[RMDB]
RNA sequence: GGGAACGACUCGAGUAGAGUCGAAAAGAUAACGCGUUCGCGCGUUAUCAAAUAAACUUGACAAAUGCCGGUCAAGAAAUACGGCAUUAUAAGAUUGCUGAAAAAGAUAUAACUUCGGUUAUAUCAAGAAGUGGAAUUAGUUCGCUAAUUCCACUUCAAAAGAAACAACAACAACAAC
Reactivity to 2A3 in 0.01 (KOAc 150mM, MgCl2 10mM, bicine 150mM(pH8.5), 24C), signal-to-noise 2, nucleotides 027 to 126: g000a000u010a000a000c000g010c010g030u020u060c170g000c010g010c000g100u010u020a000u010c000a000a000a000u040a000a000a030c000u020u040g020a000c020a010a080a020u080g010c030c010g000g010u020c030a040a070g130a090a100a000u170a030c000g000g040c010a000u000u070a090u020a070a060g130a160u120u160g100c050u070g170a040a070a030a060a060g000a020u020a000u000a000a000c000u010u010c070g000g040u010u000a010u010a000u000c000a000a010
Reactivity to DMS in 0.01 (KOAc 150mM, MgCl2 10mM, bicine 150mM(pH8.5), 24C), signal-to-noise 1, nucleotides 027 to 126: g000a020u000a000a000c000g020c000g020u000u010c200g010c000g050c000g000u000u010a010u000c010a030a100a020u000a060a060a100c100u000u000g010a020c000a100a040a030u000g000c020c030g010g000u010c050a040a020g000a110a100a060u020a120c020g000g010c000a010u000u000a130u010a140a120g000a130u000u000g010c030u010g010a040a050a100a110a120g010a020u000a000u000a020a020c010u000u000c100g030g010u000u000a000u000a000u000c000a010a080